[RMDB]
RNA sequence: GGGAACGACUCGAGUAGAGUCGAAAAGCGGGUAACUUCGGUUACCCGCAAAGACGCGUCUCGUCGCGUCGCCGUCGCCUCGCGGCGCGUCGCGUCGCGAGAAAAGGACGAAGUUCGCUUCGUCCAAUCCUAUCAUUUCCUUCGGGAAAUGAUAGGAAAAAGAAACAACAACAACAAC
Reactivity to DMS in 0.01 (KOAc 150mM, MgCl2 10mM, bicine 150mM(pH8.5), 24C), signal-to-noise 2, nucleotides 027 to 126: g010c000g000g000g010u000a000a000c000u000u010c180g050g010u000u000a000c000c010c000g000c000a000a010a050g010a050c020g010c020g030u000c170u000c110g040u000c010g020c000g020u000c020g000c040c060g010u010c110g000c090c010u000c040g030c000g020g000c020g000c030g020u000c110g020c020g010u000c020g000c030g000a060g000a050a040a110a110g000g000a020c000g000a020a020g010u000u010c190g010c010u010u000c000g020u000c000c000a060a040
Reactivity to 2A3 in 0.01 (KOAc 150mM, MgCl2 10mM, bicine 150mM(pH8.5), 24C), signal-to-noise 2, nucleotides 027 to 126: g010c020g000g000g000u010a010a010c010u060u110c210g070g000u010u000a010c010c040c000g000c000a000a000a000g000a000c000g040c000g030u020c020u050c170g170u100c010g000c010g000u010c000g000c010c010g200u110c070g080c010c000u000c000g000c000g040g000c020g010c020g190u130c100g020c000g000u020c010g000c010g040a070g040a010a080a010a000g000g000a000c000g000a000a000g000u000u170c180g010c110u000u000c000g000u000c000c000a000a010